[RMDB]
RNA sequence: GGGAACGACUCGAGUAGAGUCGAAAAGAUAUGGAGUAUCAAGGUUCGACGAAGUCGGAAACGACAGAGAAUCAUCUUGAGUACUCCUAAGUCAAAAGGCAUCAUAAGGUUCGCCUUAUGAUGCCAACACUGUGACAGACUUCGGUCUGUCACAGUGAAAAGAAACAACAACAACAAC
Reactivity to DMS in 0.01 (KOAc 150mM, MgCl2 10mM, bicine 150mM(pH8.5), 24C), signal-to-noise 2, nucleotides 027 to 126: g010a050u000a270u000g000g000a060g000u000a010u000c000a010a010g010g010u000u000c210g040a060c020g010a260a300g010u010c000g010g010a070a050a200c000g000a010c010a000g000a300g000a080a110u000c040a030u000c000u000u030g000a010g030u000a020c030u000c000c000u000a000a140g000u000c040a030a100a080a080g000g020c000a000u000c000a010u000a010a010g060g010u000u010c300g030c010c000u000u000a010u010g020a010u000g000c000c000a000a000
Reactivity to 2A3 in 0.01 (KOAc 150mM, MgCl2 10mM, bicine 150mM(pH8.5), 24C), signal-to-noise 2, nucleotides 027 to 126: g010a000u010a000u100g000g010a000g010u010a010u040c010a000a060g030g070u300u300c170g050a040c020g050a090a050g030u000c000g000g000a010a000a040c000g000a010c000a000g090a000g040a070a100u240c060a070u010c050u000u060g020a040g070u010a000c000u000c010c000u010a040a010g000u020c000a070a000a110a110g000g000c020a000u010c010a000u010a000a020g030g040u020u130c300g150c030c000u030u020a010u000g010a000u000g010c000c000a000a000